This 177-nucleotide RNA was probed chemically with DMS and 2A3. For 2A3, 2,045 sequencing reads were counted. The reactions ran in a buffer of 150 mM KOAc, 10 mM MgCl2 and 150 mM bicine (pH 8.5), at 24 C.
RNA sequence: GGGAACGACUCGAGUAGAGUCGAAAAUACUAAAACGAACGUACCAUUUGUCUAUCUAUGAGAUGUCUGCGUAAGCGUCAAACAAUAUAUGCGUACUCUUCGUCGCUGACGGUCUUGUAUCUGACCCCGACUCAUCCUCGUUCGCGAGGAUGAGUCGAAAAGAAACAACAACAACAAC
Reactivity to DMS in 0.01 (KOAc 150mM, MgCl2 10mM, bicine 150mM(pH8.5), 24C), signal-to-noise 1, nucleotides 027 to 126: u110a300c050u040a000a120a060a130c080g000a040a060c260g000u050a050c010c020a020u000u000u000g000u000c110u000a120u000c120u000a130u030g000a050g000a000u000g000u000c160u000g000c000g060u000a150a020g000c030g300u000c060a100a060a010c090a030a120u030a200u000a070u000g030c160g010u020a060c020u030c070u000u000c080g070u000c020g000c010u000g000a080c180g030g000u000c040u000u020g000u000a010u000c090u020g010a120c110c000c110
Reactivity to 2A3 in 0.01 (KOAc 150mM, MgCl2 10mM, bicine 150mM(pH8.5), 24C), signal-to-noise 4, nucleotides 027 to 126: u160a010c100u080a050a080a050a020c070g030a080a010c010g010u040a030c010c020a070u070u060u110g110u060c030u030a080u000c020u020a080u200g020a010g020a060u080g050u030c050u010g050c020g080u100a090a010g030c000g000u030c050a060a040a070c120a130a010u110a000u070a030u300g070c030g040u050a050c030u050c040u060u100c030g090u000c050g000c120u020g010a000c000g060g030u030c030u050u060g050u060a050u060c040u040g170a110c010c010c000
Source: RMDB library OK1LIB, as collected in RNAgym. For DMS, 927 sequencing reads were counted. 2A3 is a SHAPE reagent: it acylates the 2'-hydroxyl of flexible nucleotides of all four kinds. Reactivities are given for positions 27 through 126.